Description: An RNA of 177 nucleotides, treated with 2A3 and DMS and read out base by base. For DMS, 27,576 sequencing reads were counted. It was measured as part of the RMDB library OK2TRN. DMS adducts were read by reverse transcription with MarathonRT. The 2A3 profile rests on 29,703 reads.

RNA sequence: GGGAACGACUCGAGUAGAGUCGAAAACGAUGCUAUACGCGGCAUCGGCCGAUUAUACGCGCGUAAUGCCGCGAUUACGUAAUGCGCAUAUAUAUCGAUCGUAAUCGGCGCGCAUAUCGCGGCGCUAACAAGUUCCAUAAUUCGUUAUGGAACUUGUAAAAGAAACAACAACAACAAC
Reactivity to 2A3 in 0.01 (KOAc 150mM, MgCl2 10mM, bicine 150mM(pH8.5), 24C), signal-to-noise 9, nucleotides 027 to 126: c010g010a010u020g000c020u060a030u060a290c100g030c090g080g000c010a010u010c000g010g020c010c010g020a050u160u110a100u140a180c120g020c010g000c000g040u020a060a090u090g000c000c000g000c000g010a010u010u050a020c080g050u120a070a080u130g060c020g000c120a010u110a000u030a010u020a040u300c040g030a020u040c090g080u090a120a050u020c020g120g000c020g030c030g000c030a010u010a010u060c010g000c020g040g010c010g000c020u010a020
Reactivity to DMS in 0.01 (KOAc 150mM, MgCl2 10mM, bicine 150mM(pH8.5), 24C), signal-to-noise 9, nucleotides 027 to 126: c010g010a020u000g010c000u000a100u010a090c180g010c090g010g000c000a020u000c020g000g010c020c010g010a100u010u010a080u010a100c120g010c050g010c010g010u000a070a050u010g010c010c010g010c000g010a010u000u000a020c070g010u010a080a080u010g010c020g010c080a090u010a120u010a130u010a080u010c050g010a060u000c290g010u000a040a100u000c010g010g020c090g010c080g000c020a020u000a040u000c010g010c000g010g010c010g010c190u010a080